[RMDB]
RNA sequence: GGGAACGACUCGAGUAGAGUCGAAAAGAUAUGGAUCCGUCAGGGAGGCCAUCGGAAACGAUGGGCCGAAGAACUGACAGGAUCCUAAGUCAAAAGGAGGUCCGUUACUUCGGUAACGGACCUCCAACUUAGAACUUGAGUUCGCUCAAGUUCUAAGAAAAGAAACAACAACAACAAC
Reactivity to DMS in 0.01 (KOAc 150mM, MgCl2 10mM, bicine 150mM(pH8.5), 24C), signal-to-noise 2, nucleotides 027 to 126: g000a020u000a300u010g000g010a000u000c010c000g010u000c000a020g000g000g010a110g020g020c000c010a020u010c010g010g000a120a060a160c010g000a000u000g010g030g020c000c000g000a070a080g010a130a210c010u000g000a010c000a080g030g010a000u000c000c000u000a010a060g000u010c040a060a090a120a110g010g010a020g040g020u010c000c000g000u000u000a010c000u000u020c220g020g000u010a020a010c000g000g000a000c000c000u000c000c010a000a000